About this RNA
This 177-nucleotide RNA was probed chemically with DMS. The data come from the RNA Mapping Database (RMDB), library M2PK50. The RNA was probed in 150 mM KOAc, 10 mM MgCl2 and 150 mM bicine (pH 8.5) at 24 C.
[RMDB]
RNA sequence: GGGAACGACUCGAGUAGAGUCGAAAAGGCGCUACCUUCGGGUAGCGCCAAAGAAGCGGGACGCAAAGAGCGAAAAAUGGAGGUAACCGGCAACCACCAAAAAAAGCUGUAACUUCGGUUACAGCAACAUUUAUGACGUCUUCGGACGUCAUAAAUGAAAAGAAACAACAACAACAAC
Reactivity to DMS in 0.01 (KOAc 150mM, MgCl2 10mM, bicine 150mM(pH8.5), 24C), signal-to-noise 1, nucleotides 027 to 126: g040g000c010g000c010u000a000c000c000u010u020c260g020g030g050u020a020g030c000g020c000c000a000a030a020g020a240a100g000c000g000g020g000a140c030g000c050a060a150a090g010a200g010c020g000a030a040a070a130a100u000g000g010a020g030g030u000a070a100c040c070g050g000c010a070a070c020c030a090c080c030a020a010a000a060a040a100a140g000c010u000g010u000a000a020c000u010u020c100g040g020u020u000a000c000a000g020c010a030a050